Conditions: 150 mM KOAc, 10 mM MgCl2 and 150 mM bicine (pH 8.5), 24 C.
Structure probing data (DMS and 2A3) for a 177-nucleotide construct.
RNA sequence: GGGAACGACUCGAGUAGAGUCGAAAAGAGUGAGAAACUCGUCCGCCGAAUGACCAAGGGUUCCUGGGCCAGGUUAAUCCGCCCAGGGUGAGUCGGGACCUAAGGCGAGGCCGACAGGCGUAGUCGACGAGCCAACAAUCUUCGGAUUGUUGGCUCGAAAAGAAACAACAACAACAAC
Reactivity to DMS in 0.01 (KOAc 150mM, MgCl2 10mM, bicine 150mM(pH8.5), 24C), signal-to-noise 3, nucleotides 027 to 126: g000a040g020u010g000a080g000a130a160a060c000u000c010g010u020c030c060g070c040c030g000a100a060u010g000a080c020c030a090a040g010g030g020u000u000c000c000u000g020g000g000c050c110a090g040g010u010u020a120a190u020c000c040g020c000c000c000a000g010g010g000u060g020a090g000u010c020g040g000g000a260c000c020u030a250a270g000g000c000g020a130g000g000c000c000g050a160c300a050g000g040c040g030u000a300g010u030c010g000a110
Reactivity to 2A3 in 0.01 (KOAc 150mM, MgCl2 10mM, bicine 150mM(pH8.5), 24C), signal-to-noise 2, nucleotides 027 to 126: g050a020g000u070g020a110g050a090a050a010c020u010c020g020u040c000c000g070c020c040g100a080a080u150g020a050c000c000a030a050g080g020g020u040u130c000c020u000g010g010g000c120c130a160g060g010u090u160a100a020u080c000c000g010c020c000c000a000g000g000g000u000g000a000g010u020c000g020g000g060a030c000c000u050a030a020g010g000c020g020a060g010g000c000c000g110a070c040a060g020g000c000g000u040a000g010u050c040g000a020
DMS adducts were read by reverse transcription with MarathonRT. DMS (dimethyl sulfate) methylates the pairing face of unpaired adenines and cytosines. The data come from the RNA Mapping Database (RMDB), library RFM100. 2A3 adducts were read by reverse transcription with SuperScript II with manganese. For 2A3, 1,180 sequencing reads were counted.